[RMDB]
RNA sequence: GGGAACGACUCGAGUAGAGUCGAAAAUUGUUGGCACCGCAGCAAACAGGACGCGUCGUCGCGACAACGGCAGGCUGGGCAACCGGCUGGUGCCGAACGUCGCUCGACACGGGGGUGGCCCGGCCACGAUUUUGUAUAUGUUCGCAUAUACAAAAUCAAAAGAAACAACAACAACAAC
Reactivity to 2A3 in 0.01 (KOAc 150mM, MgCl2 10mM, bicine 150mM(pH8.5), 24C), signal-to-noise 3, nucleotides 027 to 126: u040u040g060u030u060g030g000c030a030c090c060g050c030a050g000c000a080a080a050c060a080g100g090a040c020g010c030g010u030c010g000u050c080g000c000g000a010c000a050a040c010g010g000c000a010g020g000c000u010g000g020g020c010a050a060c010c000g060g020c020u070g110g270u150g010c000c010g000a010a010c070g020u010c000g000c030u000c000g010a000c000a010c020g030g000g000g020g020u060g020g050c000c050c020g040g000c010c010a060c050
Reactivity to DMS in 0.01 (KOAc 150mM, MgCl2 10mM, bicine 150mM(pH8.5), 24C), signal-to-noise 7, nucleotides 027 to 126: u000u000g010u000u000g010g020c070a100c070c080g010c100a080g020c060a060a050a100c100a100g000g000a110c050g010c030g000u000c020g010u000c260g020c020g000a010c000a090a300c020g020g030c030a170g000g010c000u000g000g000g000c300a110a130c010c010g010g010c000u000g010g020u010g000c000c000g010a030a120c230g010u000c020g030c010u000c020g000a020c010a040c030g010g000g010g010g000u000g000g010c020c030c030g010g010c030c050a080c160
An RNA of 177 nucleotides, treated with 2A3 and DMS and read out base by base. The 2A3 profile rests on 7,159 reads. For 2A3 the reverse transcriptase was SuperScript II with manganese. The data come from the RNA Mapping Database (RMDB), library RFMREP. The reactions ran in a buffer of 150 mM KOAc, 10 mM MgCl2 and 150 mM bicine (pH 8.5), at 24 C.